[RMDB]
RNA sequence: GGGAACGACUCGAGUAGAGUCGAAAAUAUGCACAAGAGGGUGUUUGUAUUACCACAAAUGGCUCGUGGGCCAUUUUUAAUGACCACCAUCUUAAUAGACCUGGUGUCUAUUGUGGCUCUGAUUUUAGGACCUGGAACUUCGGUUCCAGGAAAAGAAACAACAACAACAAC
Reactivity to 2A3 in 0.01 (KOAc 150mM, MgCl2 10mM, bicine 150mM(pH8.5), 24C), signal-to-noise 6, nucleotides 027 to 129: u130a020u020g050c020a060c010a070a030g000a040g040g030g020u050g020u020u120u060g080u060a110u110u150a090c040c040a020c020a020a030a000u020g010g000c020u030c070g140u250g030g020g000c000c030a030u020u000u000u020u070a060a070u100g040a020c020c010a010c010c010a020u060c010u060u130a060a060u050a090g040a040c030c040u090g130g000u080g010u030c010u020a080u010u050g030u020g000g000c000u000c020u010g100a160u040u040u050u200a040g030g030a040
Reactivity to DMS in 0.01 (KOAc 150mM, MgCl2 10mM, bicine 150mM(pH8.5), 24C), signal-to-noise 5, nucleotides 027 to 129: u040a080u000g050c030a080c150a060a020g040a040g040g010g040u000g030u000u000u000g060u040a080u010u000a130c280c200a100c120a020a010a030u000g020g050c020u030c120g070u040g060g010g050c000c000a000u000u000u000u000u000a000a030u050g000a050c150c030a020c060c080a000u020c050u000u000a060a070u020a070g020a070c080c000u030g010g020u030g000u010c000u030a050u010u030g020u040g000g000c020u020c000u030g040a010u020u050u020u020a060g000g030a240

The record gives the reactivity of an RNA of 170 nucleotides to 2A3 and DMS. The DMS profile rests on 19,483 reads. The RNA was probed in 150 mM KOAc, 10 mM MgCl2 and 150 mM bicine (pH 8.5) at 24 C. Reactivities are given for positions 27 through 129.